[RMDB]
RNA sequence: GGGAACGACUCGAGUAGAGUCGAAAAGAUAUGGAAGUCAUACCGAGCCUCCAGUCGGAAACGACUGAAGGCGUUUGACGUAUAGCUUCCUAAGUCAAACCCUACUCUAGUUCGCUAGAGUAGGGAAGUUAUACUAAAUCUUCGGAUUUAGUAUAACAAAAGAAACAACAACAACAAC
Reactivity to 2A3 in 0.01 (KOAc 150mM, MgCl2 10mM, bicine 150mM(pH8.5), 24C), signal-to-noise 5, nucleotides 027 to 126: g000a010u020a000u040g000g010a000a010g020u050c020a010u040a090c140c300g260a070g030c010c000u000c010c000a000g000u000c000g000g000a010a000a000c010g000a000c000u000g020a010a010g000g000c010g010u050u080u150g060a010c000g000u000a010u000a010g000c000u000u010c000c000u000a000a000g000u000c000a040a020a300c000c000c000u000a000c000u000c000u000a010g070u100u080c300g040c190u000a000g010a000g010u010a000g000g000g000a010a020
Reactivity to DMS in 0.01 (KOAc 150mM, MgCl2 10mM, bicine 150mM(pH8.5), 24C), signal-to-noise 6, nucleotides 027 to 126: g000a010u000a010u020g000g010a020a010g010u000c080a010u000a010c010c020g010a040g010c000c000u010c020c010a010g000u000c000g010g000a000a010a030c010g010a030c000u000g000a010a000g010g010c000g030u000u000u010g020a300c300g000u000a010u000a040g000c010u000u000c000c000u000a000a100g000u000c000a160a160a280c010c000c000u000a000c000u000c000u000a000g010u010u010c300g020c010u000a000g000a010g010u000a010g010g000g000a010a010

Overview:
This 177-nucleotide RNA was probed chemically with 2A3 and DMS. Source: RMDB library TTRDES, as collected in RNAgym. The DMS profile rests on 9,982 reads. For 2A3 the reverse transcriptase was SuperScript II with manganese.